RNA sequence: GGGAACGACUCGAGUAGAGUCGAAAAGAUAUGGAGCCUUAAUACAGAGCUGGUGUCGGAAACGACAUGCAGCGACGAAGUAUGGGCUCCUAAGUCAAACGAUCACGACGUUCGCGUCGUGAUCGAAGCACCAAGUGAUGUUCGCAUCACUUGGUGCAAAAGAAACAACAACAACAAC
Reactivity to DMS in 0.01 (KOAc 150mM, MgCl2 10mM, bicine 150mM(pH8.5), 24C), signal-to-noise 1, nucleotides 027 to 126: g000a030u010a250u000g020g000a020g030c000c000u000u010a110a050u000a030c020a110g010a280g060c020u050g000g000u000g000u000c000g010g010a040a020a140c010g000a010c000a000u010g040c060a000g010c000g020a100c300g030a100a120g000u000a050u000g010g000g000c010u000c010c010u000a000a050g000u000c010a100a230a290c020g000a050u000c000a000c000g000a010c020g000u000u030c220g030c010g070u000c000g030u000g000a000u000c000g010a050a120
Reactivity to 2A3 in 0.01 (KOAc 150mM, MgCl2 10mM, bicine 150mM(pH8.5), 24C), signal-to-noise 1, nucleotides 027 to 126: g020a000u010a020u040g000g040a000g000c040c060u120u210a270a070u110a080c050a030g260a000g150c020u020g000g000u010g000u020c000g050g000a000a020a060c020g020a050c090a040u170g300c000a130g000c000g040a090c090g140a120a020g030u000a050u120g060g000g000c000u050c000c000u000a000a000g030u000c030a020a050a200c000g000a000u000c000a000c000g000a000c030g040u120u140c270g080c000g140u000c000g000u030g020a010u000c000g010a000a010